[RMDB]
RNA sequence: GGGAACGACUCGAGUAGAGUCGAAAAACUGGGGGCUGUAGCAGACAUUGGAGGCCAGGCCUGUCCAUGGCACUAGAGUGAAACCCAGGUGGGGUGUGGCAUCUGCAAGGGAAGGGGGGCCUGAACCCUCCGGCUAUAAGUUCGCUUAUAGCCGGAGAAAAGAAACAACAACAACAAC
Reactivity to DMS in 0.01 (KOAc 150mM, MgCl2 10mM, bicine 150mM(pH8.5), 24C), signal-to-noise 2, nucleotides 027 to 126: a180c040u010g000g000g010g020g030c050u000g020u020a080g020c020a060g010a070c100a100u020u020g030g010a090g010g000c070c080a090g010g030c040c030u000g000u010c020c030a060u010g000g030c040a100c050u010a060g030a070g020u010g000a100a080a090c020c000c020a110g020g030u020g000g020g030g040u000g020u020g000g010c060a070u000c050u000g010c080a100a040g010g010g010a080a080g010g000g020g010g010g020c060c030u010g000a030a080c120c050
Chemical mapping of a 177-nucleotide RNA with DMS. The DMS profile rests on 1,443 reads.